[RMDB]
RNA sequence: GGGAACGACUCGAGUAGAGUCGAAAAAAGGUGGAUACUACAUGGUACCACUAUCCUCUAAACAAUCUGUUCAUGCAGAAGUAGCUUCUUUUGUUAAAGAACGUUCUGAUGCAGGUGAACCUAUGCGUGCUAUUCUAGGUGGAGGAUUUAAUGAAACUCAACAGUGAAAAUUCGUUUUCACUGUUGAAAAAGAAACAACAACAACAAC
Reactivity to 2A3 in 0.01 (KOAc 150mM, MgCl2 10mM, bicine 150mM(pH8.5), 24C), signal-to-noise 6, nucleotides 027 to 156: a010a000g060g010u050g000g010a190u020a030c020u040a070c060a220u300g020g000u010a020c000c000a000c000u000a020u000c000c000u010c030u050a110a100a050c030a080a050u030c020u050g050u200u160c040a030u180g100c010a010g010a050a040g100u170a040g030c090u010u010c010u020u070u060u150g180u120u290a060a010a000g000a000a020c020g030u030u000c010u020g010a000u030g000c000a000g010g030u020g030a000a010c010c010u040a040u160g050c050g130u070g060c080u100a110u200u120c020u030a010g010g010u020g010g020a000g000g000a000u020u010u040a080a080u070g080a050a010a030c100
Reactivity to DMS in 0.01 (KOAc 150mM, MgCl2 10mM, bicine 150mM(pH8.5), 24C), signal-to-noise 3, nucleotides 027 to 156: a090a060g030g010u020g010g000a270u000a050c010u000a120c230a170u000g010g050u000a080c000c000a020c030u000a060u000c050c000u010c060u000a110a110a130c080a110a030u000c010u010g020u000u000c060a100u000g020c000a030g010a150a110g020u010a090g020c070u000u000c010u000u010u000u010g040u000u010a040a040a040g010a030a040c040g000u000u000c010u000g000a280u000g010c030a020g020g010u020g010a090a090c040c040u000a080u000g010c080g030u000g000c030u000a080u000u000c030u000a080g020g010u000g020g020a080g010g000a100u000u000u000a070a080u000g010a160a100a090c150